[RMDB]
RNA sequence: GGGAACGACUCGAGUAGAGUCGAAAAGAUAUGGAAACGUGAAAGGGAGCUCCAUUUCGGAAACGAAAUGCGAGCGAGGAUCUUUACGUUUCCUAAGUCAAAAGGUGUGCACUUCGGUGCACACCAACCACAUAUGUUUGUUCGCAAACAUAUGUGGAAAAGAAACAACAACAACAAC
Reactivity to 2A3 in 0.01 (KOAc 150mM, MgCl2 10mM, bicine 150mM(pH8.5), 24C), signal-to-noise 4, nucleotides 027 to 126: g010a000u020a000u060g010g000a000a020a000c020g000u170g150a150a060a040g090g120g080a140g010c000u010c000c000a000u000u000u000c000g000g000a020a000a010c000g000a010a020a000u150g050c300g030a000g010c010g000a000g020g040a070u030c000u000u010u010a000c010g000u000u000u000c000c000u010a010a010g020u000c030a000a020a080a210g010g000u000g000u010g010c000a000c020u060u130c300g110g000u000g000c000a000c000a010c010c000a000a000
Reactivity to DMS in 0.01 (KOAc 150mM, MgCl2 10mM, bicine 150mM(pH8.5), 24C), signal-to-noise 3, nucleotides 027 to 126: g000a020u000a100u000g000g000a010a000a000c000g000u000g010a020a010a070g020g010g010a180g020c000u000c000c000a010u000u000u000c000g000g000a030a010a050c000g010a000a000a000u000g000c300g000a010g020c010g010a080g010g000a120u010c040u000u010u000a010c010g010u000u000u000c000c000u000a000a050g000u000c020a120a080a150a110g010g020u000g010u000g010c010a010c000u000u010c300g040g000u000g000c000a000c010a000c010c000a010a060